[RMDB]
RNA sequence: GGGAACGACUCGAGUAGAGUCGAAAAGAUAUGGAGCUACUACCCACCUCGUAGUAGCUAAGACAGCCAACUAAUCGGAAACGAUUAGUUGGUCGAGCUACUUUUUCGAGAGGUAGCUCCUAAGUCACUUCCCUUUGAUGUUCGCAUCAAAGGGAAGAAAAGAAACAACAACAACAAC
Reactivity to DMS in 0.01 (KOAc 150mM, MgCl2 10mM, bicine 150mM(pH8.5), 24C), signal-to-noise 1, nucleotides 027 to 126: g000a170u020a070u000g000g000a020g000c020u000a020c000u000a140c150c060c210a300c300c040u000c060g080u000a080g000u000a000g020c000u010a020a100g020a100c300a230g000c010c000a000a000c000u000a000a030u000c000g000g000a050a040a200c000g000a000u010u010a020g040u000u000g000g000u000c060g000a030g000c010u000a000c000u000u000u000u000u000c030g030a020g000a260g000g010u010a000g000c000u000c000c020u010a030a020g000u020c090a270
Structure probing data (DMS) for a 177-nucleotide construct. The reactions ran in a buffer of 150 mM KOAc, 10 mM MgCl2 and 150 mM bicine (pH 8.5), at 24 C.